[RMDB]
RNA sequence: GGGAACGACUCGAGUAGAGUCGAAAAACAGGUGCGGACUGAUACGUCAGUCCGCACCUGAGGUGCUUGCUAUUUCACCUAAAUCGAAAUAGCACUGGCAGGCCACCUUACGAGGUGGCAUGCCAGAAAAAGCAACCGAAGUUCGCUUCGGUUGCAACUUGUUAAGAGAGUUCGCUCUCUUAACAAGAAAAGAAACAACAACAACAAC
Reactivity to 2A3 in 0.01 (KOAc 150mM, MgCl2 10mM, bicine 150mM(pH8.5), 24C), signal-to-noise 1, nucleotides 027 to 156: a030c000a000g000g070u010g000c040g010g020a000c000u010g040a030u060a070c300g070u000c010a000g000u000c000c050g000c000a000c000c000u000g000a000g010g000u000g010c040u040u040g000c000u000a010u010u010u010c000a030c020c080u090a080a030a050u090c070g010a000a000a000u000a000g000c010a010c000u000g000g000c010a010g020g020c000c000a000c000c020u060u050a090c300g080a000g000g000u000g010g000c000a000u000g010c000c000a000g030a000a000a000a000a000g010c000a000a000c000c000g010a000a000g010u030u140c250g010c100u010u000c000g000g000u000u010g010c000a000a000
This 207-nucleotide RNA was probed chemically with 2A3. Source: RMDB library M2RFPK, as collected in RNAgym. The 2A3 profile rests on 1,061 reads. The reactions ran in a buffer of 150 mM KOAc, 10 mM MgCl2 and 150 mM bicine (pH 8.5), at 24 C. Values are in units of 0.01, from 0 to 300, in steps of 10.